[RMDB]
RNA sequence: GGGAACGACUCGAGUAGAGUCGAAAACAACACUUACGCCACUAUUACCAACCCACAUAUGAUGGGACAAUAUUAUGUGUUUGAAGUAGAAGGUCUUCAGGCUCUUCAUGAUGAAGUAGUUUCUGUUUUGAGACAGCAUGGCAUAGCCUGUGAUCAGUAAAAGUGCAUGGUUCGCCAUGCACUUUUAAAAAGAAACAACAACAACAAC
Reactivity to 2A3 in 0.01 (KOAc 150mM, MgCl2 10mM, bicine 150mM(pH8.5), 24C), signal-to-noise 2, nucleotides 027 to 156: c020a010a000c040a000c050u050u180a030c040g050c060c050a050c090u050a020u080u070a010c000c060a130a110c130c090c000a020c010a040u300a050u260g250a180u020g020g020g010a040c050a110a000u080a030u140u060a030u130g030u010g030u030u050u130g080a100a070g000u080a040g110a120a050g030g010u040c000u110u130c050a020g070g000c040u030c050u080u050c070a070u040g080a090u160g050a040a020g090u160a090g060u010u140u030c010u020g300u080u010u220u210g080a080g020a060c000a010g000c010a040u010g080g000c010a030u080a010g020c000c010u040g000u000g020a010u060c060a060g010
Reactivity to DMS in 0.01 (KOAc 150mM, MgCl2 10mM, bicine 150mM(pH8.5), 24C), signal-to-noise 2, nucleotides 027 to 156: c030a060a120c030a020c020u040u020a070c070g000c050c040a090c060u010a040u040u000a090c000c010a120a190c010c010c000a040c010a180u020a110u010g030a090u000g040g020g000a120c180a040a090u000a080u020u000a040u000g020u000g020u000u010u000g020a060a080g070u000a070g000a120a040g010g000u000c010u000u000c020a060g020g000c020u000c050u000u000c000a080u000g000a100u010g020a050a100g010u000a070g020u000u010u000c030u000g020u000u000u010u010g010a110g000a060c020a090g010c020a040u010g000g020c070a130u010a040g030c030c030u010g000u000g000a070u000c040a170g000